Source: RMDB library M2PK50, as collected in RNAgym. Structure probing data (DMS and 2A3) for a 177-nucleotide construct. The reactions ran in a buffer of 150 mM KOAc, 10 mM MgCl2 and 150 mM bicine (pH 8.5), at 24 C. For 2A3 the reverse transcriptase was SuperScript II with manganese. The 2A3 profile rests on 3,570 reads. In probing experiments dimethyl sulfate is read out at A N1 and C N3, which are open when not base-paired.
RNA sequence: GGGAACGACUCGAGUAGAGUCGAAAACCUCUAGUAUUCGUACUAGAGGCACAUGCCGCCCCAACGGCUUCCUGACGGGGCGGAUUCAGUUUAAAUGGAGCAAAGCCGCUGUGUUCGCACAGCGGAAACUAAUCUGCAUCUUCGGAUGCAGAUUAGUAAAAGAAACAACAACAACAAC
Reactivity to DMS in 0.01 (KOAc 150mM, MgCl2 10mM, bicine 150mM(pH8.5), 24C), signal-to-noise 2, nucleotides 027 to 126: c000c000u000c000u010a000g000u000a010u000u000c130g010u000a010c000u000a010g010a000g000g020c050a040c110a110u010g010c020c000g030c010c000c020c010a060a300c080g000g010c020u000u010c000c010u010g010a130c300g000g000g020g030c010g000g000a010u000u000c080a090g000u020u000u010a050a050a120u010g010g010a030g000c040a140a140a140g030c000c000g020c010u000g020u010g010u000u000c210g010c010a000c000a010g020c000g010g020a010a020
Reactivity to 2A3 in 0.01 (KOAc 150mM, MgCl2 10mM, bicine 150mM(pH8.5), 24C), signal-to-noise 2, nucleotides 027 to 126: c000c000u010c000u000a000g010u000a060u040u040c240g020u040a000c000u000a000g010a000g000g030c040a040c010a080u140g020c010c000g000c000c020c000c000a020a010c050g120g000c030u110u100c010c000u000g010a010c040g000g020g000g000c020g000g030a000u110u090c060a040g040u040u050u300a110a120a080u210g000g010a010g010c000a020a050a040g030c000c000g000c000u000g010u020g030u050u090c230g020c100a000c000a000g000c000g000g000a000a000